[RMDB]
RNA sequence: GGGAACGACUCGAGUAGAGUCGAAAAAUGCAACGAUGCCCAGCAGCCAUUCCAGUUGGGUGAUUUGUACCAUUAGGGCACUGCAUCUUACCUUACGGAACUUAAUUUUUUCUGCUAUAGUUCACAACAUCAGAGAGGGAUUCGUCCCUCUCUGAUGAAAAGAAACAACAACAACAAC
Reactivity to DMS in 0.01 (KOAc 150mM, MgCl2 10mM, bicine 150mM(pH8.5), 24C), signal-to-noise 5, nucleotides 027 to 126: a040u000g000c030a030a120c190g020a190u010g010c010c000c000a120g010c040a050g000c130c090a040u000u020c070c080a190g030u000u000g030g020g010u010g010a060u010u000u010g020u000a090c170c090a130u000u000a090g000g000g030c090a050c040u000g010c000a000u000c040u000u010a120c010c010u000u010a090c200g000g010a020a030c090u010u000a070a020u000u000u000u000u000u010c090u000g020c090u000a070u020a050g000u000u000c030a110c140a100a160
Reactivity to 2A3 in 0.01 (KOAc 150mM, MgCl2 10mM, bicine 150mM(pH8.5), 24C), signal-to-noise 4, nucleotides 027 to 126: a000u050g000c020a030a010c050g120a130u040g020c000c000c000a010g000c010a000g020c050c010a120u290u150c010c040a090g160u150u120g020g050g030u040g060a060u090u070u130g050u040a090c020c050a110u070u190a090g000g010g000c030a010c010u000g000c000a010u030c020u030u080a070c000c000u020u060a060c060g020g030a030a000c000u060u060a110a170u170u120u050u010u070u100c060u060g040c010u040a040u040a160g020u010u030c050a060c040a170a010